[RMDB]
RNA sequence: GGGAACGACUCGAGUAGAGUCGAAAAACCUCACGCAUGAGGUCCAUGUCAUAGAUGGGUAAACUGAGGCUCCCCAUGUGGACAUAGCUGCCAGCGUGGAGAAAUGUGAGGCCAGGCAGUCUGACAUGAGUGCCUGUGUUCGCAGCCUGCGGGCUGAGAAAGAUGCAUUCUUCGGAAUGCAUCUUUCAAAAGAAACAACAACAACAAC
Reactivity to DMS in 0.01 (KOAc 150mM, MgCl2 10mM, bicine 150mM(pH8.5), 24C), signal-to-noise 1, nucleotides 027 to 156: a010c010c010u020c010a040c120g030c030a130u000g000a300g020g050u010c040c000a060u000g010u010c040a170u020a090g010a040u000g020g110g040u010a050a060a080c020u000g030a160g010g000c130u000c040c020c020c010a080u010g020u000g020g010a080c020a090u000a120g000c060u000g110c020c150a090g060c000g060u010g010g030a040g010a080a070a050u020g000u010g040a200g020g000c000c010a080g010g050c000a030g020u000c000u000g000a180c130a120u000g040a020g010u010g000c010c010u000g020u000g010u000u000c010g030c020a130g020c000c010u020g040c060g020g020g000c010u000g010a190
Reactivity to 2A3 in 0.01 (KOAc 150mM, MgCl2 10mM, bicine 150mM(pH8.5), 24C), signal-to-noise 1, nucleotides 027 to 156: a000c010c000u010c050a000c000g070c010a150u110g070a040g050g000u050c020c010a020u010g000u010c060a070u050a090g120a090u040g000g000g040u090a060a060a070c040u140g190a150g120g080c030u190c000c000c080c000a010u160g060u110g090g000a000c000a000u010a050g070c070u020g180c220c000a000g000c030g020u000g000g010a100g060a040a060a040u060g080u090g010a090g030g050c030c030a020g000g000c000a060g070u000c000u110g100a120c050a170u300g010a050g040u010g010c000c000u010g030u040g040u030u000c030g010c030a010g000c000c000u060g020c130g080g000g000c000u000g010a010